[RMDB]
RNA sequence: GGGAACGACUCGAGUAGAGUCGAAAAGAAGGCAGAUGGAGGUGUCAGAGGAGGGCAGGGACAGCUUGACAUUGUCAUGGUGCAGGCUGGAGAGAGAGCAAUGGGGAGCCCCAGCUUAGGUUGGGGACUCCUUACGUGAAUUCGUUCACGUAAGGAGAAAAGAAACAACAACAACAAC
Reactivity to DMS in 0.01 (KOAc 150mM, MgCl2 10mM, bicine 150mM(pH8.5), 24C), signal-to-noise 8, nucleotides 027 to 126: g010a120a100g010g010c070a050g000a100u000g010g010a080g010g010u000g010u010c090a080g010a130g010g000a100g000g000g010c080a080g010g010g000a160c050a020g010c020u000u000g000a100c030a040u000u000g010u000c280a060u020g010g020u000g000c020a030g010g010c020u000g000g010a090g000a100g010a080g000a080g010c080a050a070u000g010g010g000g010a160g000c010c000c000c000a010g000c010u000u000a080g020g010u000u000g000g000g000g010a090
Reactivity to 2A3 in 0.01 (KOAc 150mM, MgCl2 10mM, bicine 150mM(pH8.5), 24C), signal-to-noise 5, nucleotides 027 to 126: g050a020a040g050g010c060a020g030a140u120g050g030a040g030g050u070g050u110c060a020g020a050g090g030a040g000g020g000c060a040g030g010g020a030c010a010g010c010u040u040g040a090c010a060u050u120g090u160c060a080u190g060g000u030g020c020a010g020g000c010u010g040g010a040g010a010g000a000g000a000g050c040a050a070u100g030g000g010g010a020g030c010c000c000c000a010g000c010u060u090a100g000g090u010u000g010g000g000g010a020

About this RNA
Structure probing data (DMS and 2A3) for a 177-nucleotide construct. Conditions: 150 mM KOAc, 10 mM MgCl2 and 150 mM bicine (pH 8.5), 24 C. DMS adducts were read by reverse transcription with MarathonRT. High 2A3 reactivity points to a flexible backbone, as in loops and unpaired stretches. The DMS profile rests on 19,135 reads.